[RMDB]
RNA sequence: GGGAACGACUCGAGUAGAGUCGAAAAACUAAUUAUAUAGAGGAUAUGUCUCAAUUUGUUCUGCAUUAAUGCCACAGUGGGGAUGGAGGCCAGGCCGUGGCCAGAGCAGAUACGUAGGCCCAUGAAACCAUAGUAUGAGGUUCGCCUCAUACUAUGGAAAAGAAACAACAACAACAAC
Reactivity to DMS in 0.01 (KOAc 150mM, MgCl2 10mM, bicine 150mM(pH8.5), 24C), signal-to-noise 2, nucleotides 027 to 126: a110c030u010a050a080u020u010a120u030a210u000a210g010a090g000g000a150u000a030u010g000u000c040u010c020a110a080u000u000u010g010u000u000c010u010g010c150a100u000u010a060a110u020g010c000c030a030c050a020g040u000g030g010g000g000a080u000g020g000a080g000g020c040c020a030g000g020c050c050g010u000g000g030c000c050a040g000a030g000c000a030g010a060u000a030c080g010u000a080g000g010c000c020c040a070u000g000a110a070a140
Reactivity to 2A3 in 0.01 (KOAc 150mM, MgCl2 10mM, bicine 150mM(pH8.5), 24C), signal-to-noise 2, nucleotides 027 to 126: a010c010u030a060a020u300u090a130u110a130u170a280g030a050g030g050a060u050a050u180g140u020c000u000c040a040a070u050u010u070g010u020u020c010u020g000c000a100u110u150a170a060u250g010c010c010a020c020a060g010u020g080g000g010g010a020u070g100g070a060g040g090c020c000a020g010g110c010c020g040u010g000g000c030c000a010g020a000g000c010a010g020a040u060a050c020g010u030a040g070g000c040c020c000a040u140g060a130a030a020
This 177-nucleotide RNA was probed chemically with DMS and 2A3. For DMS the reverse transcriptase was MarathonRT.